[RMDB]
RNA sequence: GGGAACGACUCGAGUAGAGUCGAAAAGAAUGGGGUUUCGACCCCAUUCCUUAUGGUUCUAUAGUAUAGCGCUUAGUACUGGGGACUCUAAAUCCCUUGACCUGGGUUCGAAUCCCAGUAGGACCUCCACAAUUAAUUGACACUUCGGUGUCAAUAACUCACAAAUUAGCUUCGGCUAAUUUGUGAGAAAAGAAACAACAACAACAAC
Reactivity to 2A3 in 0.01 (KOAc 150mM, MgCl2 10mM, bicine 150mM(pH8.5), 24C), signal-to-noise 2, nucleotides 027 to 156: g020a000a000u000g000g000g020g030u040u150u230c180g070a070c000c000c000c000a000u000u030c010c000u130u140a110u220g000g000u000u000c000u040a020u020a040g050u010a090u080a190g170c140g020c150u170u080a010g020u040a140c050u060g040g000g000g000a010c000u000c020u190a060a100a120u020c010c000c000u010u000g000a000c000c000u000g000g010g000u010u000c010g010a000a020u020c000c000c000a000g000u000a000g000g010a000c020c020u030c050c000a050c040a040a050u190u290a080a010u040u040g000a000c000a000c000u040u070c240g090g000u000g010u000c000a000a000u010a000a000

An RNA of 207 nucleotides, treated with 2A3 and read out base by base. Values cover nucleotides 27 to 156. The reactions ran in a buffer of 150 mM KOAc, 10 mM MgCl2 and 150 mM bicine (pH 8.5), at 24 C. For 2A3, 950 sequencing reads were counted.